The data come from the RNA Mapping Database (RMDB), library TTRDEL.
Structure probing data (2A3 and DMS) for a 177-nucleotide construct.
The DMS profile rests on 1,817 reads.
Reactivities are given for positions 27 through 126.
For 2A3 the reverse transcriptase was SuperScript II with manganese.

RNA sequence: GGGAACGACUCGAGUAGAGUCGAAAAGAUAUGGACCAGGGUGAAGUCUGAUGACCUCGGAAACGAGCAAGGACCACCUGGUCCUAAGUCAAAGGCCAUUACAUACCUUCGGGUAUGUAAUGGCCAACACUACGAAACACUUCGGUGUUUCGUAGUGAAAAGAAACAACAACAACAAC
Reactivity to 2A3 in 0.01 (KOAc 150mM, MgCl2 10mM, bicine 150mM(pH8.5), 24C), signal-to-noise 1, nucleotides 027 to 126: g010a020u070a040u110g000g000a020c010c020a020g150g000g110u180g170a300a140g010u080c010u000g060a200u170g030a210c020c030u010c020g020g040a040a080a000c010g020a000g000c070a120a240g010g020a000c000c000a010c000c000u010g000g010u000c000c010u000a000a010g020u000c010a100a050a030g000g000c000c000a010u000u020a010c000a000u030a000c000c000u060u110c300g000g010g000u020a030u000g000u010a000a000u000g020g000c000c010a010a000
Reactivity to DMS in 0.01 (KOAc 150mM, MgCl2 10mM, bicine 150mM(pH8.5), 24C), signal-to-noise 2, nucleotides 027 to 126: g000a060u000a300u020g020g010a000c010c000a040g000g010g000u000g000a090a140g030u000c000u000g020a190u010g000a070c300c000u000c000g000g020a110a100a150c010g000a020g000c050a070a110g020g000a020c010c020a070c000c000u020g000g000u000c010c000u000a000a060g020u010c020a100a080a080g000g000c020c000a000u000u010a010c000a020u000a000c010c000u000u010c250g000g040g000u000a000u000g010u010a000a000u000g010g020c000c010a000a020